[RMDB]
Background:
Structure probing data (DMS and 2A3) for a 177-nucleotide construct. The RNA was probed in 150 mM KOAc, 10 mM MgCl2 and 150 mM bicine (pH 8.5) at 24 C. It was measured as part of the RMDB library OK2TST. For 2A3, 6,091 sequencing reads were counted. For 2A3 the reverse transcriptase was SuperScript II with manganese.
RNA sequence: GGGAACGACUCGAGUAGAGUCGAAAAGAUGCUGCGGGUAUGCAGCCUACUAUUCCGUUCUGGUUCGGAGAGGGGCCGGGGCGAACCCAGGAGCUUUCCACCGCAGUGUCCGAGCUUCGGCAGAAGAUAAUAUAACUCCUUUCGAGGAGUUAUAUUAAAAAGAAACAACAACAACAAC
Reactivity to DMS in 0.01 (KOAc 150mM, MgCl2 10mM, bicine 150mM(pH8.5), 24C), signal-to-noise 7, nucleotides 027 to 126: g000a040u000g000c010u000g010c000g000g000g010u000a060u010g010c220a080g000c010c030u000a090c080u000a140u000u000c060c030g020u000u000c040u010g010g010u000u000c030g010g010a150g000a170g010g000g000g000c020c020g010g000g000g000c040g000a040a040c110c110c120a060g010g010a170g010c030u000u000u010c090c060a110c020c010g010c030a020g010u000g000u000c010c060g000a140g010c010u000u000c050g010g020c160a120g000a050a050g010a140
Reactivity to 2A3 in 0.01 (KOAc 150mM, MgCl2 10mM, bicine 150mM(pH8.5), 24C), signal-to-noise 3, nucleotides 027 to 126: g010a010u030g010c000u010g000c010g020g020g070u140a060u190g030c030a030g050c000c000u050a100c010u050a120u140u040c060c020g000u040u000c020u050g030g040u020u020c030g090g130a120g040a130g160g000g000g000c010c010g000g000g000g040c030g010a060a040c020c030c040a030g000g030a030g010c010u130u130u000c050c040a080c010c020g000c010a010g000u010g020u000c020c020g020a030g020c020u020u030c040g070g000c080a040g040a090a000g020a050